[RMDB]
Source: RMDB library OK1LIB, as collected in RNAgym. The record gives the reactivity of an RNA of 177 nucleotides to 2A3 and DMS. The 2A3 profile rests on 2,878 reads. Reactivities are given for positions 27 through 126. The RNA was probed in 150 mM KOAc, 10 mM MgCl2 and 150 mM bicine (pH 8.5) at 24 C.
RNA sequence: GGGAACGACUCGAGUAGAGUCGAAAACGGGGUCUAGCCGAGACAAAACAGCGCGGAAGGUCUUCUCACUGGGCCGCCGGAACCGGACCCCUACUUGGGCCAACACAUCAUCGGAAGCGGUGGCCGCCGAUUAGCUCCCAUUCGUGGGAGCUAAUCGAAAAGAAACAACAACAACAAC
Reactivity to 2A3 in 0.01 (KOAc 150mM, MgCl2 10mM, bicine 150mM(pH8.5), 24C), signal-to-noise 3, nucleotides 027 to 126: c030g040g000g000g020u010c040u020a030g020c030c010g040a020g020a030c130a060a140a060a020c050a020g070c040g010c010g100g010a100a050g020g020u000c000u050u000c030u010c010a060c100u160g020g000g010c010c030g000c010c010g030g000a010a040c010c000g020g040a040c000c010c000c000u040a070c030u050u110g030g010g000c030c010a080a010c040a020c010a120u180c010a030u090c040g050g010a100a040g070c010g000g000u000g000g020c010c020g010c030
Reactivity to DMS in 0.01 (KOAc 150mM, MgCl2 10mM, bicine 150mM(pH8.5), 24C), signal-to-noise 2, nucleotides 027 to 126: c120g020g040g020g020u000c030u010a110g020c020c020g000a060g000a100c160a120a090a120a090c090a080g070c190g080c040g000g000a090a040g030g000u010c040u010u010c060u000c060a110c060u020g030g010g000c050c070g000c010c030g000g050a040a120c050c030g000g000a060c000c000c000c050u000a000c080u030u060g000g020g020c080c030a020a120c100a070c130a050u040c100a090u020c040g030g000a070a060g000c040g000g000u020g010g000c010c000g040c120